[RMDB]
RNA sequence: GGGAACGACUCGAGUAGAGUCGAAAACCUGUUGUUUAGCGUAUCGUUGCACUUGUCUGGUGGGAUUGUGGCAUUAAUUUGCCUGCUCAUCUAGGCAGUGGACAUAUGCUCAACACUGGGUAUAAUUAAACAGCUCACUUCGGUGAGCUGAAAAGAAACAACAACAACAAC
Reactivity to DMS in 0.01 (KOAc 150mM, MgCl2 10mM, bicine 150mM(pH8.5), 24C), signal-to-noise 2, nucleotides 027 to 129: c000c010u030g010u060u000g000u000u010u010a040g010c020g040u030a040u010c220g020u010u020g120c010a040c040u020u080g110u010c030u010g070g000u010g000g000g000a070u000u000g030u040g030g070c050a010u020u020a060a130u000u000u000g020c010c020u060g010c020u010c000a020u010c000u030a010g030g060c010a010g040u000g010g010a020c000a030u010a020u020g000c000u050c090a000a020c060a000c000u010g000g000g000u030a140u040a060a050u130u070a150a140a110
Reactivity to 2A3 in 0.01 (KOAc 150mM, MgCl2 10mM, bicine 150mM(pH8.5), 24C), signal-to-noise 4, nucleotides 027 to 129: c010c000u040g030u130u010g010u020u010u000a000g000c010g000u000a010u010c120g010u000u120g300c010a010c060u120u110g000u000c000u000g000g000u000g020g020g000a090u130u290g080u000g080g010c000a010u000u090a070a060u060u060u010g000c000c000u010g010c010u000c010a060u030c010u020a010g000g000c000a000g020u000g010g010a000c010a010u000a000u000g000c010u000c020a010a000c010a000c000u000g030g000g000u190a150u050a120a130u150u150a090a080a070
Chemical mapping of a 170-nucleotide RNA with DMS and 2A3. The 2A3 profile rests on 7,180 reads. Conditions: 150 mM KOAc, 10 mM MgCl2 and 150 mM bicine (pH 8.5), 24 C. Values cover nucleotides 27 to 129. 2A3 adducts were read by reverse transcription with SuperScript II with manganese.